[RMDB]
RNA sequence: GGGAACGACUCGAGUAGAGUCGAAAAGGUCUGAUCUUCGGAUCAGACCAACUCUGAUUCCCAAUAGCUGCGAAUCUUGGCUAAGACGGAUAGGCGUUGCCACUCAGGGGGGUUUCGACCCCCCUAACCUCCUUUAAUCGUUCGCGAUUAAAGGAGGAAAAGAAACAACAACAACAAC
Reactivity to DMS in 0.01 (KOAc 150mM, MgCl2 10mM, bicine 150mM(pH8.5), 24C), signal-to-noise 2, nucleotides 027 to 126: g010g020u000c000u000g010a000u000c000u000u010c210g020g000a020u000c000a000g000a000c000c000a010a040c110u000c040u000g000a200u000u000c000c000c010a150a280u000a030g000c020u010g020c100g010a080a080u020c130u020u000g000g010c020u000a010a050g000a120c160g010g000a060u000a090g020g020c040g010u000u000g000c000c000a190c220u010c140a030g000g000g000g000g000g000u000u010u020c150g010a030c000c000c000c000c000c000u000a000a020

Chemical mapping of a 177-nucleotide RNA with DMS.
The DMS profile rests on 1,815 reads.
The RNA was probed in 150 mM KOAc, 10 mM MgCl2 and 150 mM bicine (pH 8.5) at 24 C.